This 207-nucleotide RNA was probed chemically with 2A3 and DMS. The data come from the RNA Mapping Database (RMDB), library M2RFPK. DMS adducts were read by reverse transcription with MarathonRT. Values are in units of 0.01, from 0 to 300, in steps of 10.
[RMDB]
RNA sequence: GGGAACGACUCGAGUAGAGUCGAAAACCUGGAUUAGGGUUCCAGGCUAGCCCUAUCUAUCGGUCGAGAUGCGAGCGCUUAAGCUCAAAUUGAGUGGCUGAGUUAGUGGUGAACGUAUCCCUAUGUUAAAACGGUAGCUGCUUCGGCAGCUACCGAACAAAGGAACGUAGUUCGCUACGUUCCUUUGAAAAGAAACAACAACAACAAC
Reactivity to 2A3 in 0.01 (KOAc 150mM, MgCl2 10mM, bicine 150mM(pH8.5), 24C), signal-to-noise 3, nucleotides 027 to 156: c000c000u000g000g020a010u060u040a040g010g040g050u060u010c010c000a010g010g000c010u020a010g010c010c000c000u010a010u030c030u030a150u060c010g030g000u010c000g020a020g000a160u020g000c040g000a000g000c040g040c220u300u300a170a090g000c010u020c000a000a020a000u020u010g020a030g030u210g040g000c010u010g000a000g000u000u010a070g000u160g130g000u020g030a070a010c070g070u090a110u160c010c000c000u040a080u070g100u040u130a080a070a020a030c000g010g000u000a000g000c000u010g010c020u070u140c270g050g000c010a000g000c000u010a000c000c010g000a000a000
Reactivity to DMS in 0.01 (KOAc 150mM, MgCl2 10mM, bicine 150mM(pH8.5), 24C), signal-to-noise 3, nucleotides 027 to 156: c000c000u000g010g010a070u010u000a090g020g010g020u000u000c000c010a040g080g030c000u000a290g000c000c000c000u000a030u000c040u000a080u000c020g060g050u000c000g020a300g010a060u000g010c300g000a030g050c020g010c290u010u010a090a150g010c010u000c000a020a280a050u010u000g000a210g010u010g010g020c020u030g010a040g010u010u000a020g020u010g000g000u000g030a130a080c060g010u010a100u000c000c010c010u010a100u010g010u000u000a090a050a110a190c010g030g020u000a020g040c000u010g010c020u000u010c300g040g020c000a010g000c000u000a000c000c000g000a010a030